[RMDB]
RNA sequence: GGGAACGACUCGAGUAGAGUCGAAAAGUCGCUGAGCACAUAGCCGGGGCGCACCGACAGCCCGGCCACCGCCCGCCGCAUGCCUUCGAUGUUGGCCACGUGCACACCACGACGGUCGACCUCCACCUGCAUAGGUGCUAUUCGUAGCACCUAUGCAAAAAGAAACAACAACAACAAC
Reactivity to DMS in 0.01 (KOAc 150mM, MgCl2 10mM, bicine 150mM(pH8.5), 24C), signal-to-noise 3, nucleotides 027 to 126: g000u020c060g030c020u010g000a130g030c020a070c070a140u030a190g000c020c050g000g030g010g000c060g030c110a130c060c050g030a040c120a080g040c010c000c030g000g040c050c080a030c040c040g000c040c030c050g000c060c010g000c050a010u000g020c010c000u010u020c060g000a080u000g000u000u020g000g010c010c000a060c030g000u010g000c080a130c170a110c270c030a020c000g000a090c060g000g010u000c050g020a040c020c020u010c010c050a050c140c080
Reactivity to 2A3 in 0.01 (KOAc 150mM, MgCl2 10mM, bicine 150mM(pH8.5), 24C), signal-to-noise 5, nucleotides 027 to 126: g070u060c010g000c090u040g040a020g040c040a020c040a150u120a040g000c000c020g040g000g030g060c020g000c050a080c040c000g060a040c030a040g020c000c020c000g000g000c010c010a030c010c000g020c000c020c000g020c010c010g020c020a030u110g030c010c000u060u090c030g070a060u090g010u050u040g020g000c000c010a020c000g010u020g000c090a030c010a050c100c000a030c020g130a030c060g040g010u020c000g010a050c000c000u000c020c010a060c000c040